Structure probing data (DMS and 2A3) for a 177-nucleotide construct. The reactions ran in a buffer of 150 mM KOAc, 10 mM MgCl2 and 150 mM bicine (pH 8.5), at 24 C. For DMS the reverse transcriptase was MarathonRT. 2A3 adducts were read by reverse transcription with SuperScript II with manganese. For DMS, 10,587 sequencing reads were counted.
RNA sequence: GGGAACGACUCGAGUAGAGUCGAAAAGAUAUGGACGGUUUCAACGCAGAGUCGGCAGGUCGGAAACGACCUGCGACGACGAAGUAUCAACCGUCCUAAGUCAAAGGGUCUUGUUCGCAAGACCCAAUCACUAUUUUGAGUUCGCUCAAAAUAGUGAAAAAGAAACAACAACAACAAC
Reactivity to DMS in 0.01 (KOAc 150mM, MgCl2 10mM, bicine 150mM(pH8.5), 24C), signal-to-noise 8, nucleotides 027 to 126: g010a040u000a300u000g000g000a000c000g010g010u000u000u000c160a110a050c090g010c050a050g000a300g010u000c000g010g010c000a000g010g010u000c000g000g000a070a070a110c010g010a010c000c000u000g000c000g010a050c010g010a030c020g000a260a250g000u000a050u000c190a010a020c000c000g000u000c000c000u000a010a070g000u000c020a130a120a130g000g010g010u000c000u000u000g000u000u020c160g010c010a020a010g000a020c000c000c000a010a020
Reactivity to 2A3 in 0.01 (KOAc 150mM, MgCl2 10mM, bicine 150mM(pH8.5), 24C), signal-to-noise 4, nucleotides 027 to 126: g010a020u040a030u130g000g000a000c010g000g020u020u050u150c170a100a020c040g040c060a040g020a020g150u000c000g030g000c010a000g000g000u000c010g040g000a060a070a060c010g000a000c000c000u000g000c000g020a020c000g010a000c010g040a080a020g010u030a030u060c030a010a000c010c000g000u000c000c000u000a030a020g020u010c030a060a060a120g010g000g000u010c000u020u040g040u080u100c300g030c140a000a010g000a000c000c000c000a000a000